The record gives the reactivity of an RNA of 207 nucleotides to 2A3. Reactivities are given for positions 27 through 156. Values are in units of 0.01, from 0 to 300, in steps of 10. Conditions: 150 mM KOAc, 10 mM MgCl2 and 150 mM bicine (pH 8.5), 24 C. For 2A3 the reverse transcriptase was SuperScript II with manganese.

[RMDB]
RNA sequence: GGGAACGACUCGAGUAGAGUCGAAAAGGGAUGGGAUCCGAAGCCCCACUGAGGGAUAAUACAGGCUCUCCCAUCCAACUCCUAUUCCAACACGUCCUCGUCGUACAGAGUGGUAACAUGUGUCACCUAUACUAAUGACCGUUCGCGGUCAUUAGAAGACUAUGGGAGACUUCGGUCUCCCAUAGUCAAAAGAAACAACAACAACAAC
Reactivity to 2A3 in 0.01 (KOAc 150mM, MgCl2 10mM, bicine 150mM(pH8.5), 24C), signal-to-noise 2, nucleotides 027 to 156: g020g000g030a000u020g000g130g000a060u160c010c010g020a030a010g000c000c000c000c000a100c110u250g020a300g010g040g010a040u070a190a080u160a300c070a010g000g000c000u000c000u000c030c000c000a000u000c000c000a010a030c010u000c020c000u030a040u010u190c000c030a000a010c010a010c040g030u070c010c000u040c020g130u040c010g000u080a120c030a030g040a020g060u020g000g120u060a100a020c000a080u100g040u020g030u050c050a130c150c010u050a030u010a160c040u000a020a000u000g000a000c010c000g040u020u070c170g000c020g070g000u000c010a000u000u000a000g000a060a040